[RMDB]
RNA sequence: GGGAACGACUCGAGUAGAGUCGAAAAGAUAUGGACCAUCCCACCCACUGACCACGUCGGAAACGAUAUCAAGUGAGGUGGGAGUGGUCCUAAGUCAAAGCAGAAUACUCUUCGGAGUAUUCUGCAAGUAACAAUGUAACUUCGGUUACAUUGUUACAAAAGAAACAACAACAACAAC
Reactivity to DMS in 0.01 (KOAc 150mM, MgCl2 10mM, bicine 150mM(pH8.5), 24C), signal-to-noise 8, nucleotides 027 to 126: g010a040u000a300u010g000g010a010c000c000a130u000c000c000c010a020c000c000c000a010c000u000g000a130c300c280a070c240g020u010c020g010g010a120a080a170c010g010a030u000a080u010c080a100a040g010u000g000a110g020g010u000g000g010g000a000g010u000g010g000u000c000c000u010a000a050g010u000c020a080a110a140g000c000a010g000a020a010u000a000c000u000c000u000u020c170g030g000a010g000u000a000u000u000c000u000g000c000a010a020
Reactivity to 2A3 in 0.01 (KOAc 150mM, MgCl2 10mM, bicine 150mM(pH8.5), 24C), signal-to-noise 7, nucleotides 027 to 126: g020a010u080a050u170g000g000a000c000c000a010u010c000c000c000a000c010c000c000a000c010u030g020a060c050c070a180c300g030u020c020g050g030a140a080a040c030g010a020u020a020u210c100a210a070g010u030g050a270g070g010u020g010g000g000a000g010u020g000g000u000c000c000u000a060a010g030u000c060a130a070a020g010c000a000g000a000a000u020a010c000u010c010u070u220c300g110g000a000g000u000a000u000u000c000u000g000c000a000a000